An RNA of 177 nucleotides, treated with DMS and 2A3 and read out base by base. Conditions: 150 mM KOAc, 10 mM MgCl2 and 150 mM bicine (pH 8.5), 24 C. DMS (dimethyl sulfate) methylates the pairing face of unpaired adenines and cytosines.

[RMDB]
RNA sequence: GGGAACGACUCGAGUAGAGUCGAAAACAGACGGUCAUGACGUGUUGUGUAUGUCCUUUUGAUUUUUGCUUUCAGACAACAUUUAGCUUAUACACAUGAGAUCGUAUGUACGUCCGCGCAAAUGGAACACUAGAGAGGCUUUCGAGCCUCUCUAGUGAAAAGAAACAACAACAACAAC
Reactivity to DMS in 0.01 (KOAc 150mM, MgCl2 10mM, bicine 150mM(pH8.5), 24C), signal-to-noise 3, nucleotides 027 to 126: c020a060g000a030c010g000g000u030c020a080u010g000a120c080g010u010g000u030u010g040u030g000u000a080u000g000u000c150c020u000u010u010u000g010a120u010u000u030u060u000g000c150u020u020u020c180a090g020a140c060a030a040c040a050u000u000u010a040g030c010u010u010a020u020a020c050a030c050a060u000g030a160g000a030u020c030g000u000a000u010g000u010a080c140g000u000c010c010g000c150g020c160a010a090a060u010g000g000a070a100
Reactivity to 2A3 in 0.01 (KOAc 150mM, MgCl2 10mM, bicine 150mM(pH8.5), 24C), signal-to-noise 4, nucleotides 027 to 126: c000a000g020a010c010g040g000u080c050a090u150g110a080c040g030u050g060u120u120g000u050g050u040a020u030g210u230c000c000u120u040u020u100g140a200u030u040u080u100u100g120c090u090u170u130c090a160g050a270c040a060a060c020a040u100u060u070a050g010c010u100u000a000u000a030c020a000c000a040u060g040a010g000a090u010c020g030u010a070u040g020u010a060c050g030u010c030c000g060c000g000c030a020a080a170u060g060g060a060a000